Source information:
Conditions: 150 mM KOAc, 10 mM MgCl2 and 150 mM bicine (pH 8.5), 24 C. Structure probing data (2A3) for a 177-nucleotide construct. The 2A3 profile rests on 406 reads. Source: RMDB library OK1LIB, as collected in RNAgym.
RNA sequence: GGGAACGACUCGAGUAGAGUCGAAAAGAUUCUUCAAGUAUACUUGUCUCCGUACCUUUGACAGAUAUUCGAAGAGCAAUUAAGGAUUCUUUGCCAGAACUAAUUGAGGGGAUAAAAGGUGAUGAGCACCCGUUCGGGUUUUCGAACCCGAACGGGUAAAAGAAACAACAACAACAAC
Reactivity to 2A3 in 0.01 (KOAc 150mM, MgCl2 10mM, bicine 150mM(pH8.5), 24C), signal-to-noise 1, nucleotides 027 to 126: g060a070u000u120c030u100u100c020a010a070g030u030a080u010a050c050u150u000g030u010c000u000c040c050g130u140a160c060c000u100u200u070g000a000c000a000g050a000u050a000u050u040c030g040a010a020g030a030g000c110a040a100u030u070a120a040g060g070a070u060u000c040u010u060u120g000c000c040a080g080a110a070c020u000a120a120u110u160g000a100g030g000g100g000a000u060a090a160a000a000g040g000u090g000a050u130g050a000g070c050